[RMDB]
RNA sequence: GGGAACGACUCGAGUAGAGUCGAAAAACUCAGUUCUCCAGAGAACUGAAGGCCCCAUGCCUGUGAACAAACUAUGUUUUUGUUUUUUAAUAAACGGAGAGAAAACCUAUUUGGGGAGAUUGAAUUGUCAACUUUAGUACUUCGGUACUAAAGUUGAAAAAGAAACAACAACAACAAC
Reactivity to DMS in 0.01 (KOAc 150mM, MgCl2 10mM, bicine 150mM(pH8.5), 24C), signal-to-noise 1, nucleotides 027 to 126: a140c020u010c000a030g020u000u000c000u000c100c230a240g020a050g010a010a010c000u010g010a030a100g000g000c090c010c000c040a100u000g000c050c010u000g030u010g030a040a080c020a050a020a050c140u000a100u010g000u010u000u000u000u000g010u000u000u000u000u000u000a040a200u000a030a070a090c030g000g020a100g000a120g000a070a090a140a130c020c020u000a100u000u000u000g040g030g010g000a050g010a050u040u010g000a120a160u020u000g010